Source: RMDB library OK2TRN, as collected in RNAgym.
The record gives the reactivity of an RNA of 177 nucleotides to 2A3 and DMS.
Values are in units of 0.01, from 0 to 300, in steps of 10.
The reactions ran in a buffer of 150 mM KOAc, 10 mM MgCl2 and 150 mM bicine (pH 8.5), at 24 C.
Reactivities are given for positions 27 through 126.

[RMDB]
RNA sequence: GGGAACGACUCGAGUAGAGUCGAAAAUUCGUGAUACAGCAAACCGUCAAGUACGUGAGUAGAGUCACGCACACGGCUGAUGACUUUGGUAUAAAACGGGCUGUACUGGUCCGAAAUAUGCGUGUAACACUUGUUGCUGUUUCGACAGCAACAAGUGAAAAGAAACAACAACAACAAC
Reactivity to 2A3 in 0.01 (KOAc 150mM, MgCl2 10mM, bicine 150mM(pH8.5), 24C), signal-to-noise 2, nucleotides 027 to 126: u040u010c030g020u080g030a070u120a120c050a040g080c060a100a140a110c000c030g000u010c000a030a120g030u080a090c010g090u120g130a060g080u210a030g030a010g120u060c000a030c060g060c000a050c010a030c000g210g000c010u070g050a220u020g000a030c030u050u080u130g110g020u080a050u040a070a040a030a020c010g000g000g040c010u020g000u060a160c080u070g010g010u010c000c000g110a010a060a050u270a050u050g110c090g010u110g000u060a080a020
Reactivity to DMS in 0.01 (KOAc 150mM, MgCl2 10mM, bicine 150mM(pH8.5), 24C), signal-to-noise 2, nucleotides 027 to 126: u000u000c040g000u010g010a090u000a090c010a090g000c050a100a120a200c030c000g000u000c030a210a110g010u100a000c050g010u000g000a090g010u000a090g000a140g000u000c000a030c050g020c050a140c100a070c110g020g020c040u000g000a060u020g030a060c040u000u000u000g000g020u000a030u000a010a050a140a070c030g010g000g000c050u000g000u000a050c110u000g000g000u000c000c000g010a010a030a180u020a050u000g020c080g060u000g000u000a120a220